[RMDB]
RNA sequence: GGGAACGACUCGAGUAGAGUCGAAAAAAUUGGACUUAUGUCUUUAUUGGUCAUUCAAGUGGGGCAAAAGAAAUAUCCUUUUAAAACUCAGGCAAACUGGGUGUUUGUCUUGGAUCCUGUCAGAGGACUAUAUGUCUUCCUUCGGGAAGACAUAUAGAAAAGAAACAACAACAACAAC
Reactivity to DMS in 0.01 (KOAc 150mM, MgCl2 10mM, bicine 150mM(pH8.5), 24C), signal-to-noise 2, nucleotides 027 to 126: a080a050u010u000g000g010a050c050u000u010a080u010g000u000c010u000u010u000a090u030u000g010g000u000c200a090u010u010c050a050a080g020u000g010g010g010g020c040a040a070a020a040g000a050a060a090u000a100u000c010c000u020u000u000u000a030a090a110a100c050u000c080a020g010g010c050a030a040a040c000u020g020g010g030u000g000u000u010u000g000u010c010u010u000g010g020a070u000c020c000u010g010u000c240a100g000a080g000g000a140
Reactivity to 2A3 in 0.01 (KOAc 150mM, MgCl2 10mM, bicine 150mM(pH8.5), 24C), signal-to-noise 1, nucleotides 027 to 126: a030a000u120u080g010g000a020c030u080u060a010u180g000u020c000u000u140u020a110u020u050g060g020u050c090a110u190u180c030a150a000g090u130g000g010g000g000c020a040a060a000a040g050a020a090a010u110a050u020c000c000u030u000u020u020a100a170a030a060c020u020c010a000g010g000c020a010a010a020c020u070g220g000g240u070g020u010u010u050g000u000c000u010u040g050g000a040u000c000c000u100g010u010c060a090g050a000g240g000a020